[RMDB]
RNA sequence: GGGAACGACUCGAGUAGAGUCGAAAAAAAAAGAGCGUAAUCGCGUCAUUGAGUGACGUGAAGAUCAUCCAAGUGUCCUGUCUACAGUCGUAGAUAGCGCACAAUACGCUGAUGAUCAUUCAAAAAACAAUGUAGCUCACUUCGGUGAGCUACAUUGAAAAGAAACAACAACAACAAC
Reactivity to DMS in 0.01 (KOAc 150mM, MgCl2 10mM, bicine 150mM(pH8.5), 24C), signal-to-noise 2, nucleotides 027 to 126: a050a040a010a050a030g000a010g000c010g020u020a050a040u010c030g060c030g000u000c020a060u010u010g000a180g060u000g000a020c010g010u000g030a040a110g000a010u000c000a010u010c000c150a080a140g010u000g000u010c300c020u000g010u000c000u000a000c020a120g070u000c120g000u000a020g000a000u000a000g010c300g000c000a020c010a080a130u000a110c030g000c020u000g000a020u000g010a020u000c020a140u010u010c080a000a050a110a050a070a060
Reactivity to 2A3 in 0.01 (KOAc 150mM, MgCl2 10mM, bicine 150mM(pH8.5), 24C), signal-to-noise 2, nucleotides 027 to 126: a000a000a000a000a000g120a010g000c050g090u090a060a050u030c030g000c000g000u000c040a010u040u260g130a080g300u070g010a000c010g000u020g010a010a010g000a000u020c000a020u000c010c030a180a090g000u000g010u050c000c010u020g030u010c000u000a050c060a270g180u250c140g010u130a000g000a010u010a010g040c030g000c030a000c020a000a010u110a040c030g000c120u020g000a000u000g000a010u000c040a030u100u180c080a060a050a000a000a000a070